Chemical mapping of a 207-nucleotide RNA with 2A3 and DMS.
Reactivities are given for positions 27 through 156.
DMS (dimethyl sulfate) methylates the pairing face of unpaired adenines and cytosines.
The RNA was probed in 150 mM KOAc, 10 mM MgCl2 and 150 mM bicine (pH 8.5) at 24 C.
For 2A3 the reverse transcriptase was SuperScript II with manganese.
The DMS profile rests on 1,585 reads.
RNA sequence: GGGAACGACUCGAGUAGAGUCGAAAAAAACUACAGCCCAAGUAUGAGAGCAGCGUAUCCUGAAGCUAAUUAGUAACCAGAAAAUCAGGAAGGUAAAGCAAAUCUCUGGAGGCAAGAUCUGGACUCUAUGAUAUCGCCGCUUCUCCCCACUUGAAGAUCCGGUAAAUUUAUUCGUAAAUUUACCGGAAAAAGAAACAACAACAACAAC
Reactivity to 2A3 in 0.01 (KOAc 150mM, MgCl2 10mM, bicine 150mM(pH8.5), 24C), signal-to-noise 1, nucleotides 027 to 156: a000a000a000c110u130a110c010a040g020c000c020c030a030a010g070u040a020u130g110a030g010a010g020c040a000g000c000g020u030a020u030c010c000u020g040a050a000g010c000u000a020a010u030u000a020g090u020a060a030c020c000a030g010a060a090a000a050u040c000a000g000g000a030a000g020g040u150a100a070a030g030c110a020a110a060u040c040u000c010u040g010g000a020g030g000c050a080a030g010a090u020c060u030g010g000a030c000u000c050u060a080u080g000a020u020a000u100c020g000c070c000g010c010u160u000c010u020c020c010c000c010a000c010u000u040g030a010a000g300a010
Reactivity to DMS in 0.01 (KOAc 150mM, MgCl2 10mM, bicine 150mM(pH8.5), 24C), signal-to-noise 1, nucleotides 027 to 156: a010a020a110c090u010a100c090a130g000c030c010c000a050a140g030u000a140u030g010a130g000a090g030c050a050g020c020g030u030a130u000c010c040u010g040a060a090g010c040u000a080a130u000u000a180g000u010a030a060c040c030a210g000a060a030a070a050u000c010a050g020g000a110a140g020g000u000a040a050a060g000c020a050a060a060u010c010u000c000u000g030g000a110g020g000c080a050a080g000a040u010c040u020g000g030a070c030u010c020u020a050u000g000a110u000a060u000c030g020c010c010g080c060u000u000c060u000c000c000c000c020a070c100u000u030g010a120a090g000a140